[RMDB]
RNA sequence: GGGAACGACUCGAGUAGAGUCGAAAAGAUAUGGACACGAGGUGCAUAGGCAACAGCUCGGAAACGAGACAUGCCUCCACCCGUGUCCUAAGUCAAACGUCUAAGAUUGUUCGCAAUCUUAGACGAACACUAUUCUUUCCUUCGGGAAAGAAUAGUGAAAAGAAACAACAACAACAAC
Reactivity to DMS in 0.01 (KOAc 150mM, MgCl2 10mM, bicine 150mM(pH8.5), 24C), signal-to-noise 7, nucleotides 027 to 126: g010a030u000a300u000g000g000a010c010a010c000g010a140g020g010u010g010c300a130u010a090g000g010c000a030a070c230a190g000c010u000c000g000g000a080a070a160c010g010a020g000a050c100a140u010g000c010c000u000c300c010a010c000c000c010g010u000g000u000c000c000u000a000a060g020u000c030a060a090a190c010g010u000c000u000a000a010g000a010u000u000g000u010u020c180g010c000a010a010u000c000u000u000a000g000a000c000g010a040a110
Reactivity to 2A3 in 0.01 (KOAc 150mM, MgCl2 10mM, bicine 150mM(pH8.5), 24C), signal-to-noise 6, nucleotides 027 to 126: g000a020u060a020u140g000g000a010c010a000c010g160a300g010g020u020g020c110a250u280a280g020g000c010a050a030c050a240g080c010u000c000g000g010a040a040a010c000g000a010g030a040c020a060u090g000c000c010u030c030c000a000c000c010c000g000u000g010u000c000c000u000a010a010g010u000c020a030a100a080c020g010u000c000u000a000a000g010a010u010u030g050u110u160c300g000c150a000a000u010c000u010u000a000g000a010c000g000a000a000